[RMDB]
RNA sequence: GGGAACGACUCGAGUAGAGUCGAAAACUAGCAGACGGAUGUUCCACCCCCCGGCGGGGCCGAGUGAGGCUUAUCCCGGGGAUCGGUGAAUCGUCCCGGGAUGGGGUCUCCGAGGACCCCUUCCGAACGAUUAGAAGAAGUUCGCUUCUUCUAAUCGAAAAGAAACAACAACAACAAC
Reactivity to 2A3 in 0.01 (KOAc 150mM, MgCl2 10mM, bicine 150mM(pH8.5), 24C), signal-to-noise 1, nucleotides 027 to 126: c010u030a000g060c050a010g060a120c090g090g020a010u030g030u020u040c020c000a020c030c000c000c000c000c000g020g000c050g030g010g000g000c010c000g020a060g060u300g030a050g000g030c000u010u030a050u060c000c000c000g010g010g000g000a040u080c020g050g030u080g060a060a080u090c020g040u010c060c040c020g000g000g000a020u030g060g030g000g000u000c000u010c030c020g050a100g050g000a120c000c020c020c050u050u070c000c010g000a060a020
Reactivity to DMS in 0.01 (KOAc 150mM, MgCl2 10mM, bicine 150mM(pH8.5), 24C), signal-to-noise 3, nucleotides 027 to 126: c040u010a120g010c070a090g010a080c130g000g010a070u010g010u010u000c020c010a160c000c000c020c010c010c000g020g000c300g000g000g000g030c000c000g010a100g000u020g020a030g000g010c010u010u000a040u000c040c000c000g020g010g010g010a010u000c040g000g030u000g000a060a090u010c020g010u000c000c020c060g000g000g010a000u000g010g000g000g000u000c000u000c050c050g000a160g000g000a090c020c000c010c020u000u000c010c000g010a100a170
An RNA of 177 nucleotides, treated with 2A3 and DMS and read out base by base. The data come from the RNA Mapping Database (RMDB), library VIROID. Values cover nucleotides 27 to 126. The RNA was probed in 150 mM KOAc, 10 mM MgCl2 and 150 mM bicine (pH 8.5) at 24 C. For 2A3, 1,641 sequencing reads were counted. For DMS the reverse transcriptase was MarathonRT. For DMS, 2,380 sequencing reads were counted. 2A3 is a SHAPE reagent: it acylates the 2'-hydroxyl of flexible nucleotides of all four kinds.